An RNA of 207 nucleotides, treated with 2A3 and read out base by base. Reactivities are given for positions 27 through 156.
[RMDB]
RNA sequence: GGGAACGACUCGAGUAGAGUCGAAAAGUCGUCGCUCGACGAAGGCCGGUGAGCAGAAGGCUUAGCGGAUCCCCUCGCGGCAAGACGCCCGGAACCGCGAUAAAGAACUCGCCGCCGAGCCCGCGCCGCCGCUCCACCGCGCUGCUAGUCGAGCGGAGUUAUUGACACAGUUCGCUGUGUCAAUAACAAAAGAAACAACAACAACAAC
Reactivity to 2A3 in 0.01 (KOAc 150mM, MgCl2 10mM, bicine 150mM(pH8.5), 24C), signal-to-noise 2, nucleotides 027 to 156: g100u060c030g010u000c000g010c000u010c000g020a010c010g000a010a010g000g000c000c000g000g000u040g000a090g000c090a020g090a300a090g050g000c020u050u060a020g000c010g020g040a230u140c060c050c000c000u000c000g000c010g000g000c020a030a010g050a060c040g080c010c020c040g040g130a120a100c080c060g000c020g050a040u130a150a170a070g090a060a100c020u020c050g000c000c010g020c060c050g000a000g000c000c010c000g000c010g020c030c020g010c030c030g010c020u060c040c020a000c000c000g060c080g000c000u020g020c210u020a000g030u000c000g010a000g000c000g000g000a000